[RMDB]
RNA sequence: GGGAACGACUCGAGUAGAGUCGAAAACACUCUUUGACACAGGUACACGACUGCUAUCACUAUGCAGGAAAAAGGUGUGCGAAAAAUAGUGAUAAUGUGUCUUUGAGUGGUAGAGUGAAAAACUCGAGGGUAUUACAAUGUUCGCAUUGUAAUACCCAAAAGAAACAACAACAACAAC
Reactivity to 2A3 in 0.01 (KOAc 150mM, MgCl2 10mM, bicine 150mM(pH8.5), 24C), signal-to-noise 6, nucleotides 027 to 126: c000a000c000u020c020u010u000u010g000a010c010a000c000a020g010g090u080a000c010a000c010g090a030c030u010g010c000u050a040u280c020a090c210u080a090u230g040c000a010g050g230a080a080a030a040a000g120g010u030g000u020g000c010g090a050a060a010a070a000u290a070g180u130g090a020u080a180a100u050g000u000g000u000c000u020u010u010g000a000g000u010g010g010u030a030g010a000g010u050g060a090a010a060a050a080c000u010c000g000a100
Reactivity to DMS in 0.01 (KOAc 150mM, MgCl2 10mM, bicine 150mM(pH8.5), 24C), signal-to-noise 3, nucleotides 027 to 126: c000a020c000u010c020u000u000u040g000a000c000a000c000a030g000g010u000a010c000a000c040g000a130c010u000g000c010u020a110u050c240a160c300u000a040u050g010c010a000g000g030a070a100a050a170a080g000g000u000g020u000g020c000g000a010a050a050a120a080u080a120g030u040g020a040u010a040a020u000g010u000g020u000c000u000u000u010g000a010g010u000g000g000u030a060g000a020g000u000g020a050a110a050a130a050c030u020c000g000a300